[RMDB]
An RNA of 177 nucleotides, treated with 2A3 and DMS and read out base by base. The 2A3 profile rests on 1,793 reads. For DMS the reverse transcriptase was MarathonRT. Reactivities are given for positions 27 through 126. The DMS profile rests on 2,059 reads. The reactions ran in a buffer of 150 mM KOAc, 10 mM MgCl2 and 150 mM bicine (pH 8.5), at 24 C.
RNA sequence: GGGAACGACUCGAGUAGAGUCGAAAAGUCAGACCACACUUUAAUGUGCCACUCUGCGGAGAGUGCAGUCUGCGAUAGUGCCCCAGGUGGACUGGGUUAACAAAGGCAAAACAUCGCCCCACGCGGCAUACGGCACACUAUUCGUAGUGUGCCGUAUAAAAGAAACAACAACAACAAC
Reactivity to 2A3 in 0.01 (KOAc 150mM, MgCl2 10mM, bicine 150mM(pH8.5), 24C), signal-to-noise 1, nucleotides 027 to 126: g010u000c000a000g000a010c000c040a010c020a020c030u160u130u280a280a040u180g000u000g000c040c010a000c000u000c000u010g000c020g000g000a010g000a000g000u000g000c000a010g000u040c000u000g000c020g010a010u020a000g300u300g000c010c000c000c000a010g040g030u090g060g000a010c000u000g000g000g070u000u010a000a010c000a000a000a000g080g000c020a000a150a040a120c060a110u140c120g020c000c000c010c010a060c030g080c070g100g000c040
Reactivity to DMS in 0.01 (KOAc 150mM, MgCl2 10mM, bicine 150mM(pH8.5), 24C), signal-to-noise 3, nucleotides 027 to 126: g010u010c000a010g000a020c010c050a060c020a030c180u000u020u010a160a150u000g000u000g000c020c020a030c000u000c020u000g020c010g020g020a210g000a020g010u000g000c040a190g000u000c000u000g000c000g010a130u010a000g000u010g020c000c010c000c000a000g000g000u010g030g010a060c010u010g010g020g010u000u010a000a140c160a000a020a040g000g000c030a090a060a110a110c180a110u010c160g000c000c000c020c020a240c220g000c120g020g000c160